[RMDB]
RNA sequence: GGGAACGACUCGAGUAGAGUCGAAAAUCAAUCGCAUUGUUGGGUGAAAGUUGGAGGAUAAAUCCUCACCAAGAUAUAAAUUAAGCAAGAGAUAUAAGGCCGCUCCUUAUAUUGCGACUUGCUUAAAGAUAUCCGGCAAAGUUCGCUUUGCCGGAAACGGUGUAAAUAUGUUCGCAUAUUUACACCGAAAAGAAACAACAACAACAAC
Reactivity to 2A3 in 0.01 (KOAc 150mM, MgCl2 10mM, bicine 150mM(pH8.5), 24C), signal-to-noise 1, nucleotides 027 to 156: u130c050a070a070u110c030g110c100a050u030u080g010u050u050g000g090g000u140g070a150a060a100g030u050u060g030g010a000g010g000a020u100a150a140a100u080c000c000u010c000a020c020c010a020a000g030a030u090a010u050a140a210a050u040u010a000a000g000c010a000a010g010a000g020a050u010a000u000a000a000g000g030c090c030g030c010u130c050c000u000u000a000u000a000u050u040g090c060g050a070c030u000u000g010c000u000u010a010a000a000g020a010u070a030u030c000c010g010g040c000a000a010a000g040u020u050c100g010c100u020u000u010g010c010c010g000g000a000a000a000
Reactivity to DMS in 0.01 (KOAc 150mM, MgCl2 10mM, bicine 150mM(pH8.5), 24C), signal-to-noise 1, nucleotides 027 to 156: u000c070a110a170u000c070g020c140a180u000u000g010u010u030g010g000g040u010g000a050a070a110g020u000u000g000g010a140g060g030a140u040a110a110a250u000c020c010u000c010a100c070c020a070a110g020a140u000a030u000a020a070a100u000u000a000a010g000c000a020a040g010a300g000a000u000a040u000a000a000g010g010c090c300g000c300u010c030c000u010u000a020u000a010u000u000g010c010g040a160c000u020u000g020c000u000u000a010a060a090g000a170u000a070u010c020c000g000g010c040a010a010a020g010u010u000c300g040c050u000u020u000g010c000c040g020g020a010a000a010